[RMDB]
RNA sequence: GGGAACGACUCGAGUAGAGUCGAAAAAGUGAAAAAGAGGCUACUGCUAGGCGCUUAUUCACUAGCAAGAAUGAAUUCCUCUGAUUUGUUUUCUAAGGCUCGAUACGUUCGCCGAGCCAUACAGCUGGAAUUCAACAAAAACUUUUUUCUACCUUCACGUUUUAGGUGGUUUCGACCACCUAAAACGAAAAGAAACAACAACAACAAC
Reactivity to 2A3 in 0.01 (KOAc 150mM, MgCl2 10mM, bicine 150mM(pH8.5), 24C), signal-to-noise 2, nucleotides 027 to 156: a000g120u130g060a050a040a000a000a000g150a030g080g000c040u140a030c100u160g010c010u040a000g240g010c030g060c250u110u140a140u190u300c050a040c050u000a000g010c020a000a090g060a070a130u090g000a000a000u000u020c000c000u000c070u010g030a160u020u200u140g140u060u300u070u010c140u130a010a200g010g000c000u000c020g060a070u080a240c140g080u120u140c010g000c040c000g000a000g020c000c000a000u040a040c010a010g070c170u040g000g000a000a000u010u030c000a020a020c050a030a170a000a010a010c000u100u020u000u110u110u040c070u070a130c000c000u090u130c090a010
Source: RMDB library OK3TST, as collected in RNAgym. Chemical mapping of a 207-nucleotide RNA with 2A3. The 2A3 profile rests on 438 reads. For 2A3 the reverse transcriptase was SuperScript II with manganese.